[RMDB]
RNA sequence: GGGAACGACUCGAGUAGAGUCGAAAAUUUGACAUCUGCAACUAUAAGGCUAAGGUUGCUGGUAUUGGAAAAUACUACAAGACUAAUACUUGUAGGUUUGUAGAAUUAGAUGACCAAGGGCAUCAUUAGACCCGUUUGUUCGCAAACGGGAAAAGAAACAACAACAACAAC
Reactivity to 2A3 in 0.01 (KOAc 150mM, MgCl2 10mM, bicine 150mM(pH8.5), 24C), signal-to-noise 7, nucleotides 027 to 129: u110u060u150g070a020c030a080u000c000u000g020c000a000a000c000u020a020u020a140a030g070g010c050u030a080a050g080g000u040u030g040c130u010g040g010u030a060u040u030g080g030a080a020a000a040u040a020c010u020a020c030a130a020g030a050c040u070a070a090u080a190c000u020u020g000u020a020g000g040u020u020u000g010u010a010g030a030a030u100u050a090g020a050u050g030a050c030c050a120a130g090g040g000c010a030u030c000a010u070u110a040g070a060
Reactivity to DMS in 0.01 (KOAc 150mM, MgCl2 10mM, bicine 150mM(pH8.5), 24C), signal-to-noise 3, nucleotides 027 to 129: u000u010u000g040a100c230a100u000c010u030g000c030a010a050c000u000a050u020a000a000g000g000c090u040a050a130g030g020u020u030g020c130u000g020g020u030a030u010u030g020g010a060a060a000a020u000a040c020u020a020c060a020a120g030a040c000u000a110a180u050a110c030u000u000g010u010a030g030g020u010u010u010g030u000a000g000a010a070u000u000a120g030a040u030g020a120c000c010a090a170g010g040g000c000a020u000c000a080u070u070a030g000a180